[RMDB]
RNA sequence: GGGAACGACUCGAGUAGAGUCGAAAAUGGAACGCACUUUACCCGCUGAGGCACCCAAAGCGGGUAAAGCAGGGCGCGAUAGGCCAAUUGUUAUCAUGCUAGACCCAGGGCACGGUGGGGAAGACCCGAAGCAAUCUCCAUUCGUGGAGAUUGCUUCAAAAGAAACAACAACAACAAC
Reactivity to DMS in 0.01 (KOAc 150mM, MgCl2 10mM, bicine 150mM(pH8.5), 24C), signal-to-noise 1, nucleotides 027 to 126: u020g010g040a070a070c070g000c050a280c050u010u000u000a010c010c000c010g010c010u000g000a300g000g000c130a060c210c050c000a060a270a030g000c000g000g000g000u000a000a000a050g000c140a050g020g000g020c070g010c000g000a040u000a050g000g020c020c010a180a090u000u000g030u010u010a040u020c040a130u000g010c040u000a100g000a170c000c000c070a070g000g020g030c030a060c140g000g040u010g000g020g010g000a060a100g000a100c020c030c030